[RMDB]
RNA sequence: GGGAACGACUCGAGUAGAGUCGAAAAUGGCUAAUAACUCUUCUGUACGCUCUAACUGUUCUUCGUGCUGUGGUAAGAAUUGCUUACUGGUACAGAAGUGAGUGCAAUCUAAGCAUGCAUUCGCAUGUAGAAUUCCCACGUUCGCGUGGGAAUUCUAAAAAGAAACAACAACAACAAC
Reactivity to DMS in 0.01 (KOAc 150mM, MgCl2 10mM, bicine 150mM(pH8.5), 24C), signal-to-noise 1, nucleotides 027 to 126: u010g000g000c040u020a180a110u010a100a160c060u000c000u000u000c000u010g020u000a000c030g040c060u000c090u000a030a010c030u000g000u000u000c020u000u000c120g030u040g020c100u010g070u000g020g020u000a050a010g000a000a000u000u000g000c170u000u000a000c050u000g000g000u010a000c000a020g000a000a000g000u020g000a050g000u030g000c100a120a130u000c070u000a070a180g020c020a020u030g000c040a200u000u000c280g000c070a010u020g010